[RMDB]
RNA sequence: GGGAACGACUCGAGUAGAGUCGAAAAGCGAUCAAUAAUAAGUCGACCACUCGAAAGAGUCGCAUGGAAACAUGCCUACUAAUGCGUCCAAUGUAGAUCGACGAUUAGGACGCAGAAGAUCGCGAAAGCUACUCAGGCACUUCGGUGCCUGAGUAGCAAAAGAAACAACAACAACAAC
Reactivity to 2A3 in 0.01 (KOAc 150mM, MgCl2 10mM, bicine 150mM(pH8.5), 24C), signal-to-noise 1, nucleotides 027 to 126: g000c020g000a010u060c000a000a000u090a240a000u110a160a000g030u000c000g000a070c010c140a010c000u000c010g050a140a000a000g050a000g010u010c140g000c000a000u000g000g020a050a140a000c000a000u000g040c040c000u010a020c000u000a000a050u070g000c000g000u000c000c000a000a000u140g000u020a030g010a140u130c060g060a000c040g000a030u010u020a040g000g020a040c000g000c000a000g000a050a010g000a000u010c010g000c030g050a070a050a000
Reactivity to DMS in 0.01 (KOAc 150mM, MgCl2 10mM, bicine 150mM(pH8.5), 24C), signal-to-noise 1, nucleotides 027 to 126: g000c000g050a000u000c000a010a140u000a050a190u060a080a140g000u000c010g000a000c080c170a030c000u000c000g000a230a300a220g000a000g050u000c220g080c000a000u000g080g000a000a130a250c000a000u000g000c000c110u000a050c000u000a080a190u050g000c000g030u000c030c000a110a090u040g010u000a060g090a300u000c000g000a000c000g000a060u000u000a130g050g000a000c000g000c000a100g050a030a210g000a000u000c000g000c000g000a080a290a090